[RMDB]
RNA sequence: GGGAACGACUCGAGUAGAGUCGAAAAGAAACGUUCGCGUUUCCUAUUGGGGUCGAUGACAUGAUUCCUCCCUUUGAUCGUACUGAAGCCUCCACGGUACGGGAGGAGGGAAUCAACAGCAUCGACGGAGGCACCCUGAUCCCACGUUCGCGUGGAAGUUCGACUGAAUAUUCGUAUUCAGUCGAACAAAAGAAACAACAACAACAAC
Reactivity to 2A3 in 0.01 (KOAc 150mM, MgCl2 10mM, bicine 150mM(pH8.5), 24C), signal-to-noise 5, nucleotides 027 to 156: g020a010a030a000c030g030u100u110c300g010c010g140u030u040u050c020c030u110a160u040u110g000g010g000g030u060c040g010a000u010g040a120c050a060u030g000a020u000u010c000c000u070c000c010c000u300u130u030g040a020u020c010g000u000a000c000u010g050a190a040g020c000c000u010c000c000a010c010g000g000u010a000c000g000g000g010a010g000g000a010g000g010g010a000a010u010c010a010a110c090a120g270c010a010u000c020g100a130c030g050g040a000g010g000c010a040c010c010c000u040g030a090u110c020c020c010a000c020g040u080u090c250g000c010g160u040g030g050a100a070
Reactivity to DMS in 0.01 (KOAc 150mM, MgCl2 10mM, bicine 150mM(pH8.5), 24C), signal-to-noise 1, nucleotides 027 to 156: g000a010a000a020c030g100u000u010c150g020c160g040u000u000u000c000c030u000a260u030u010g010g030g000g000u000c000g010a040u000g060a170c030a300u000g000a120u010u010c000c000u000c000c000c000u040u000u010g040a090u010c030g020u000a040c000u000g010a040a130g040c000c000u000c030c010a300c070g010g020u000a040c000g010g000g000a040g010g000a030g000g010g000a010a010u000c000a000a050c130a210g020c030a010u000c010g020a130c030g040g010a050g000g000c000a300c000c030c000u000g000a110u000c090c030c000a090c250g000u000u000c160g000c170g010u000g000g000a070a170
The data come from the RNA Mapping Database (RMDB), library RNAMAK. The record gives the reactivity of an RNA of 207 nucleotides to 2A3 and DMS. 2A3 adducts were read by reverse transcription with SuperScript II with manganese.